[RMDB]
RNA sequence: GGGAACGACUCGAGUAGAGUCGAAAACUACAAGAAGCUUAUUGAUCACAUCAUGGCCAAUCGAAGGCUUUACAAUGCUGAUAUCCGAUUUGGCACUCCCAGUGAUUAUUUCGAGGCCAUCAAGGAGGUUUAAUCCCGGUUUCGACCGGGAUUAAACAAAAGAAACAACAACAACAAC
Reactivity to DMS in 0.01 (KOAc 150mM, MgCl2 10mM, bicine 150mM(pH8.5), 24C), signal-to-noise 2, nucleotides 027 to 126: c030u000a070c110a070a160g020a190a160g010c070u000u010a070u000u000g010a010u000c040a020c050a140u020c100a070u000g030g020c020c000a030a010u000c030g020a050a130g000g010c010u000u010u020a120c290a120a060u020g000c000u000g000a060u000a180u000c180c020g010a050u010u020u030g000g020c020a040c050u050c020c040c060a120g010u020g000a060u000u000a090u000u000u000c070g010a070g020g010c010c060a090u010c120a120a190g010g010a050g000
Reactivity to 2A3 in 0.01 (KOAc 150mM, MgCl2 10mM, bicine 150mM(pH8.5), 24C), signal-to-noise 1, nucleotides 027 to 126: c010u100a010c060a010a050g200a010a010g040c040u150u080a100u170u300g040a000u080c000a010c020a040u160c040a110u220g060g000c010c000a000a000u000c000g040a040a020g000g070c000u000u060u070a100c110a070a090u090g010c000u020g100a080u090a240u150c050c000g000a030u110u100u000g000g000c010a030c070u020c000c020c000a000g010u010g030a010u040u020a030u040u000u130c060g020a070g050g000c000c000a050u030c030a020a080g070g030a040g010
Notes
Conditions: 150 mM KOAc, 10 mM MgCl2 and 150 mM bicine (pH 8.5), 24 C. Structure probing data (DMS and 2A3) for a 177-nucleotide construct. For DMS, 878 sequencing reads were counted. The data come from the RNA Mapping Database (RMDB), library OK2TST. The 2A3 profile rests on 713 reads.